Chemical mapping of a 207-nucleotide RNA with 2A3 and DMS.
RNA sequence: GGGAACGACUCGAGUAGAGUCGAAAACAGUUCAAUUUGUAUUGUUCCCCUAUCCUCUCAGCUUGAUGAUUACAAAUAUUUGCUCAAAGUGGAUGCUUUAAUUUAAAUUUUCAUGGUAGUUCCUACUCCAUUUUACGUUUUACGUGGUCAUUCUAGACAUACGACUCAGUUUCGACUGAGUCGUAUGAAAAGAAACAACAACAACAAC
Reactivity to 2A3 in 0.01 (KOAc 150mM, MgCl2 10mM, bicine 150mM(pH8.5), 24C), signal-to-noise 2, nucleotides 027 to 156: c040a010g080u130u140c050a010a280u130u150u270g030u070a100u010u090g030u050u020c000c000c000c020u020a030u030c020c030u060c000u000c010a020g040c050u050u090g010a090u050g000a020u100u120a070c070a020a080a050u090a120u020u130u150g000c010u070c070a080a060a030g020u030g030g010a030u030g000c020u090u030u170a030a060u110u160u090a100a200a180u140u130u080u080c070a040u100g060g000u040a020g040u070u090c010c020u010a090c010u010c010c000a010u030u040u030u050a050c070g020u110u000u090u000a050c030g010u020g040g000u030c020a030u010u030c020u050a000g000a060
Reactivity to DMS in 0.01 (KOAc 150mM, MgCl2 10mM, bicine 150mM(pH8.5), 24C), signal-to-noise 1, nucleotides 027 to 156: c020a130g010u020u000c030a040a080u000u000u000g060u000a140u000u000g010u010u000c030c010c010c020u000a070u000c040c020u000c030u010c060a160g040c020u000u010g020a160u000g000a090u000u000a180c060a030a080a070u000a100u000u000u000g020c060u020c040a040a060a050g080u000g000g030a050u000g040c040u000u000u010a010a030u000u000u000a020a060a170u000u020u020u000c070a110u000g030g020u000a060g010u000u010c040c000u000a030c070u000c020c010a140u000u000u000u000a130c040g020u000u000u000u000a100c070g000u000g000g000u000c080a230u010u000c030u000a060g020a300

It was measured as part of the RMDB library OK3TST. Values cover nucleotides 27 to 156. For DMS the reverse transcriptase was MarathonRT.